The record gives the reactivity of an RNA of 177 nucleotides to 2A3 and DMS. The RNA was probed in 150 mM KOAc, 10 mM MgCl2 and 150 mM bicine (pH 8.5) at 24 C. Reactivities are given for positions 27 through 126. DMS adducts were read by reverse transcription with MarathonRT.
RNA sequence: GGGAACGACUCGAGUAGAGUCGAAAAGAUAUGGAAUUCAACAAACAGCGAGGAUCUUACGUCGGAAACGACGUAAGGGAGCUGCUAGUUGAGAUUCCUAAGUCAAAGGCGUACUUCGGUACGCCAACCUUGUUCUAGACUUCGGUCUAGAACAAGGAAAAGAAACAACAACAACAAC
Reactivity to 2A3 in 0.01 (KOAc 150mM, MgCl2 10mM, bicine 150mM(pH8.5), 24C), signal-to-noise 2, nucleotides 027 to 126: g050a030u090a050u130g010g010a020a020u050u040c010a030a020c010a030a210a020c000a010g000c000g020a300g050g030a020u000c000u000u000a000c000g020u000c000g000g040a050a050a050c000g010a000c010g000u000a000a000g010g020g000a000g020c010u020g000c000u010a040g020u000u010g010a050g010a030u000u000c010c000u030a120a040g080u040c080a130a100a100g020g000c000g010u000a000c010u060u140c300g140g000u000a000c000g000c010c000a010a000
Reactivity to DMS in 0.01 (KOAc 150mM, MgCl2 10mM, bicine 150mM(pH8.5), 24C), signal-to-noise 2, nucleotides 027 to 126: g010a060u010a300u020g010g010a000a020u000u000c010a020a000c010a070a160a130c000a000g020c000g030a090g010g010a030u010c000u000u000a000c000g010u010c000g000g010a070a100a260c000g030a000c000g000u000a000a020g000g000g010a020g020c020u000g020c000u010a240g000u020u000g000a040g000a040u000u010c000c000u000a110a200g000u000c030a080a140a130g000g010c000g000u000a000c000u000u010c300g020g000u000a010c000g000c000c010a020a000

For 2A3 the reverse transcriptase was SuperScript II with manganese.